RNA sequence: GGGAACGACUCGAGUAGAGUCGAAAAUUGCACGUCCAAUGAGGGACCCACAAUCAAACACAACCAGUAAAGAACCAGAAGCACGUAUUGUUGAUCAUGAUAAAGAAGCAGUUCGGGCACUCAUUGAGAACGCAGUCAAAUUCGUUUGACUGCGUUCAAAAGAAACAACAACAACAAC
Reactivity to DMS in 0.01 (KOAc 150mM, MgCl2 10mM, bicine 150mM(pH8.5), 24C), signal-to-noise 1, nucleotides 027 to 126: u010u000g020c070a240c090g070u000c020c000a130a050u000g020a150g000g010g010a070c020c300c060a100c100a120a090u050c090a130a060a040c080a030c090a040a110c060c030a070g000u000a080a110a070g000a220a070c020c010a050g010a130a060g060c130a000c050g010u000a030u020u000g020u000u000g010a070u030c090a030u000g000a070u010a090a050a120g010a060a070g050c010a050g000u000u000c030g020g030g000c030a080c020u040c060a160u000u010g000a140
Reactivity to 2A3 in 0.01 (KOAc 150mM, MgCl2 10mM, bicine 150mM(pH8.5), 24C), signal-to-noise 1, nucleotides 027 to 126: u070u040g000c040a000c090g050u010c040c030a020a060u060g020a070g060g050g000a010c000c000c040a010c090a020a090u050c070a080a210a000c010a000c000a090a060c050c010a030g140u130a040a120a000g010a050a020c040c040a020g050a030a010g040c000a000c030g030u020a090u010u160g000u060u080g080a080u070c060a100u130g220a060u100a160a190a050g090a020a010g030c000a000g040u090u040c060g000g010g000c020a000c030u090c020a080u000u100g040a020